Overview:
The data come from the RNA Mapping Database (RMDB), libraries RFM100 and RFMREP. The record gives the reactivity of an RNA of 177 nucleotides to DMS and 2A3.
RNA sequence: GGGAACGACUCGAGUAGAGUCGAAAAUGCAAACUCCUUGGUCACACACACAUACGGCGCGGAAGGCGUGUUUGCUGACGUUUCCAUUCCCUUGUUUCAAUCAUUGGUUAAUCCCUUGAUUCCUUUGCUAAUUCUGUAGUUUCGACUACAGAAUUAGAAAAGAAACAACAACAACAAC
Reactivity to DMS in 0.01 (KOAc 150mM, MgCl2 10mM, bicine 150mM(pH8.5), 24C), signal-to-noise 9, nucleotides 027 to 126: u020g010c080a040a060a090c050u010c020c010u000u000g010g010u000c040a100c060a050c090a070c110a090c120a080u020a100c100g010g010c060g030c040g010g000a080a090g000g020c140g010u000g010u000u010u000g020c020u000g000a160c060g010u000u010u010c020c040a260u000u000c000c010c000u000u010g010u000u010u010c090a060a050u000c020a020u010u000g010g000u000u010a100a120u020c080c020c010u000u010g010a090u000u010c110c040u000u000u010g010
Reactivity to 2A3 in 0.01 (KOAc 150mM, MgCl2 10mM, bicine 150mM(pH8.5), 24C), signal-to-noise 9, nucleotides 027 to 126: u140g010c020a040a030a050c020u040c010c000u030u040g060g020u090c020a040c000a000c000a010c010a000c010a130u070a170c100g030g000c040g010c030g110g070a060a030g080g000c060g020u080g050u040u060u060g030c010u030g020a030c040g010u020u040u020c020c010a030u010u020c010c000c000u020u040g040u010u040u030c030a050a050u020c020a040u020u050g000g030u060u120a110a110u140c030c020c000u020u050g020a040u110u090c020c030u070u070u100g020